[RMDB]
RNA sequence: GGGAACGACUCGAGUAGAGUCGAAAAGCUGAUCGACUUCGGUAGCUCGGGGCGGGUGAAGCUGAUGCACAACCACGCCCCUGUCACCAAGCUCUGAGAUUUCGCGCCGAGCGUGAAGUCACGGCGGCGAGACCGUCGGGUUCGCCCGACGGUCUCGAAAAGAAACAACAACAACAAC
Reactivity to 2A3 in 0.01 (KOAc 150mM, MgCl2 10mM, bicine 150mM(pH8.5), 24C), signal-to-noise 1, nucleotides 027 to 126: g020c020u030g050a170u090c030g030a080c000u050u050c070g000g080u110a040g090c040u060c120g010g000g010g030c000g000g050g000u020g020a080a010g000c050u130g030a130u300g000c050a030c040a100a040c000c000a290c100g000c000c030c000c000u000g000u010c000a000c000c000a040a020g000c020u000c040u060g030a150g000a040u030u150u110c040g000c000g020c040c080g080a030g020c020g030u100g010a000a020g010u020c020a000c050g010g000c030g010g030
Reactivity to DMS in 0.01 (KOAc 150mM, MgCl2 10mM, bicine 150mM(pH8.5), 24C), signal-to-noise 1, nucleotides 027 to 126: g090c080u010g020a170u020c140g040a100c020u000u000c080g050g010u000a030g000c040u000c300g020g030g000g060c000g040g020g000u000g000a100a250g020c050u000g040a270u010g070c080a040c170a260a020c030c020a090c050g000c000c010c000c000u000g010u000c060a000c030c020a050a090g000c060u030c070u020g010a090g020a080u000u000u020c050g020c020g000c010c100g010a100g020c010g000u000g000a050a070g020u000c000a220c050g000g000c000g010g040